[RMDB]
RNA sequence: GGGAACGACUCGAGUAGAGUCGAAAACAUAUGAACUUUAAAGUAGUUUUUUCCAAUUCUGUGAAGAAAGUCAUUGGUUGCUUGAUGGGGAUGGCAUUGAAUCUGUAAAUUACCUUGGGCAGUAUGGCCAUUUUCACGAUAUUGAUUCUUCCUAUCCGUUCCAUCGUAGAUUCGUCUACGAUGGAACAAAAGAAACAACAACAACAAC
Reactivity to 2A3 in 0.01 (KOAc 150mM, MgCl2 10mM, bicine 150mM(pH8.5), 24C), signal-to-noise 2, nucleotides 027 to 156: c050a030u200a100u090g080a050a050c020u080u100u160a250a130a080g060u100a060g020u060u020u010u000u080u050c030c000a000a050u170u050c090u190g020u040g020a010a070g040a030a060a010g010u010c030a000u120u130g120g000u080u080g000c010u050u070g020a060u110g040g000g020g030a020u000g030g000c000a010u000u200g030a020a030u050c020u000g040u070a020a100a130u130u080a120c060c090u030u030g020g000g030c010a020g040u050a080u150g020g030c010c010a030u010u030u000u050c020a020c060g020a050u000a030u060u100g010a010u060u020c000u000u000c010c000u030a120u100c040c110